[RMDB]
RNA sequence: GGGAACGACUCGAGUAGAGUCGAAAAAAGAAUAAUAGAGUAGGCAUGAAGGUAUCAGGUAGCUAAAUGGCUUUUGAGACGCCACCACUGUUGCAGUGUCCACUUAUUUAUCAGUGUUAGAGUCAUUGAAAGGUUUUAUUGAAUUGACUGCCCAACAACUAAUGGUAUGCUUCGGCAUACCAUUAGUAAAAGAAACAACAACAACAAC
Reactivity to DMS in 0.01 (KOAc 150mM, MgCl2 10mM, bicine 150mM(pH8.5), 24C), signal-to-noise 1, nucleotides 027 to 156: a030a110g000a080a100u020a030a110u010a140g010a120g040u010a050g000g020c030a080u000g020a100a100g010g030u000a050u000c030a070g020g000u000a060g060c060u000a050a050a110u000g020g010c030u000u000u000u000g030a250g010a080c070g030c040c010a040c050c020a120c080u000g010u000u000g000c050a110g050u010g010u000c030c010a080c060u020u000a130u020u000u010a080u010c100a060g020u000g030u000u000a070g000a080g040u000c010a080u000u000g010a090a030a100g010g010u000u010u000u000a140u040u000g020a090a070u010u000g000a060c030u010g020c010c010c020a060a070c080a080
Reactivity to 2A3 in 0.01 (KOAc 150mM, MgCl2 10mM, bicine 150mM(pH8.5), 24C), signal-to-noise 2, nucleotides 027 to 156: a000a020g040a010a040u120a010a020u060a090g110a010g020u030a030g020g000c010a030u050g050a060a080g050g000u010a040u090c020a030g010g040u050a000g000c040u090a160a120a090u090g000g000c000u080u070u080u080g070a130g010a020c080g000c030c030a000c040c030a080c020u090g070u120u080g050c050a020g000u000g040u050c040c000a000c070u060u040a070u130u160u050a030u030c040a030g010u000g010u070u030a010g030a020g040u020c030a030u060u090g050a060a040a030g060g000u040u080u010u090a080u100u150g020a110a020u010u030g030a010c000u030g000c010c020c030a040a050c020a000
The record gives the reactivity of an RNA of 207 nucleotides to DMS and 2A3. Reactivities are rounded to 0.1 and cut off at 0 and 3. Values cover nucleotides 27 to 156. The reactions ran in a buffer of 150 mM KOAc, 10 mM MgCl2 and 150 mM bicine (pH 8.5), at 24 C. DMS adducts were read by reverse transcription with MarathonRT.